Chemical mapping of a 207-nucleotide RNA with 2A3. It was measured as part of the RMDB library OK3TST. The RNA was probed in 150 mM KOAc, 10 mM MgCl2 and 150 mM bicine (pH 8.5) at 24 C.

[RMDB]
RNA sequence: GGGAACGACUCGAGUAGAGUCGAAAAUUCGGGGGGGCGCAGUAUCGUGGGAUGAUGUUACGGAUAAACCCGCCACUUUCCCCGCUACCGUACCAGUAGCAACCGCAACGGCGCUGGCGACUGGCCGCACUAUCUCCCUUACUGGAGGCGCGACGGGGUACAGUCUUCCAUUCGUGGAAGACUGUACAAAAGAAACAACAACAACAAC
Reactivity to 2A3 in 0.01 (KOAc 150mM, MgCl2 10mM, bicine 150mM(pH8.5), 24C), signal-to-noise 1, nucleotides 027 to 156: u120u050c020g030g000g000g000g040g000g000c020g010c020a000g040u110a000u150c050g020u120g000g000g020a040u090g010a020u050g030u170u020a020c030g030g000a040u170a070a170a030c010c000c000g020c020c020a110c060u090u070u010c000c000c000c000g000c010u040a040c030c090g030u000a020c010c000a050g020u020a020g030c000a020a070c050c070g070c090a000a060c050g050g010c020g000c050u000g040g030c010g090a120c010u020g030g000c030c000g120c010a000c090u150a100u100c060u000c000c020c010u000u120a110c030u190g070g000a020g000g040c050g000c080g060a020c030g010g010g000